[RMDB]
RNA sequence: GGGAACGACUCGAGUAGAGUCGAAAAGAUAUGGAAAGGACGGUCGAUGAAAUUCAAACUAUCCUUAUCGGAAACGAUAAGGACGAAUUUGAAUGGAGACCAGUCCUUUCCUAAGUCAAAAGAUUUGCAUGUGAUCUUCGGAUCACAUGCAAAUCAACAUUGCUUUUGGGUUCGCCCAAAAGCAAUGAAAAGAAACAACAACAACAAC
Reactivity to 2A3 in 0.01 (KOAc 150mM, MgCl2 10mM, bicine 150mM(pH8.5), 24C), signal-to-noise 2, nucleotides 027 to 156: g000a000u020a000u020g000g000a000a010a000g000g000a000c010g020g010u000c020g170a300u000g000a010a000a010u000u000c000a000a010a020c120u010a000u010c010c000u000u000a000u000c010g010g020a080a000a000c000g000a000u080a000a010g000g080a010c000g000a270a300u000u000u000g010a000a000u000g000g000a000g000a000c000c000a010g000u000c000c000u000u000u000c000c000u000a000a000g000u000c010a000a040a000a040g010a000u000u000u010g000c000a010u010g000u000g010a000u000c000u030u110c300g050g000a000u000c000a000c000a000u000g000c000a000a000a000u000c000a000a000
Reactivity to DMS in 0.01 (KOAc 150mM, MgCl2 10mM, bicine 150mM(pH8.5), 24C), signal-to-noise 1, nucleotides 027 to 156: g010a020u000a010u000g000g000a000a020a020g000g030a020c000g010g020u000c000g040a150u000g020a120a180a020u000u000c000a010a000a040c130u000a040u000c010c000u000u000a000u000c010g010g020a020a020a000c000g020a020u000a020a020g010g020a020c000g010a000a010u000u000u000g020a030a020u000g010g010a040g020a000c000c000a040g040u000c000c020u000u000u000c000c000u000a010a130g020u000c000a100a080a140a130g000a010u010u000u000g010c020a020u000g020u000g020a020u000c000u000u020c300g070g010a010u010c000a000c000a000u010g010c000a010a000a000u000c010a080a180